An RNA of 207 nucleotides, treated with 2A3 and read out base by base. The RNA was probed in 150 mM KOAc, 10 mM MgCl2 and 150 mM bicine (pH 8.5) at 24 C. Source: RMDB library M2RFPK, as collected in RNAgym. For 2A3 the reverse transcriptase was SuperScript II with manganese.
RNA sequence: GGGAACGACUCGAGUAGAGUCGAAAAAUCAGCCUUCGUUCUGUAAACGGGGUUGGAUCCGACUCGCAUAGGCUCUCCAACCCAACUCCUACUCAAUACGUCCUCGUCGUACAGAACGGUAACAUGUAAAACGAAGGCUGCUUCGGCAGCCUUCGAAGGUCUAAGGUAAGUUCGCUUACCUUAGACCAAAAGAAACAACAACAACAAC
Reactivity to 2A3 in 0.01 (KOAc 150mM, MgCl2 10mM, bicine 150mM(pH8.5), 24C), signal-to-noise 1, nucleotides 027 to 156: a000u050c040a020g020c000c010u050u050c000g000u010u010c000u000g000u010a050a080a040c010g020g000g000g090u010u000g000g000a140u300c010c000g080a040c010u060c220g090c070a100u080a160g040g000c000u000c010u000c020c000a000a000c000c000c000a020a090c060u010c020c000u040a100c000u010c060a160a140u110a260c050g060u040c050c040u160c080g040u030c050g070u100a000c000a030g010a000a010c000g030g000u070a100a030c070a100u160g060u230a010a070a000a060c000g020a000a000g000g000c000u000g000c000u000u000c010g060g000c000a010g000c040c000u000u000c000g000a000a000